[RMDB]
RNA sequence: GGGAACGACUCGAGUAGAGUCGAAAAAGAAAAAACAGGAACUAUGGAAUAAAUCCUGCAUAGAACUGAAAGCAUCGCAGGAAAAGGACAAGAUGCAAAAAGAAUCGUUUAAAAGAUUCAAAAAAAACGUAAUAUUACGGUUCGCCGUAAUAUUACGAAAAGAAACAACAACAACAAC
Reactivity to DMS in 0.01 (KOAc 150mM, MgCl2 10mM, bicine 150mM(pH8.5), 24C), signal-to-noise 1, nucleotides 027 to 126: a170g010a020a100a050a050a120a180c050a020g030g010a040a050c080u000a000u000g000g000a170a170u010a090a100a140u030c050c000u010g010c010a030u000a050g000a070a110c030u000g010a090a020a090g000c020a000u000c060g020c060a030g010g050a050a040a040a030g000g010a110c120a030a080g000a000u000g000c000a140a080a070a140a070g000a010a010u000c010g000u000u000u040a090a090a130a110g000a000u000u010c000a000a000a000a040a030a080a030a050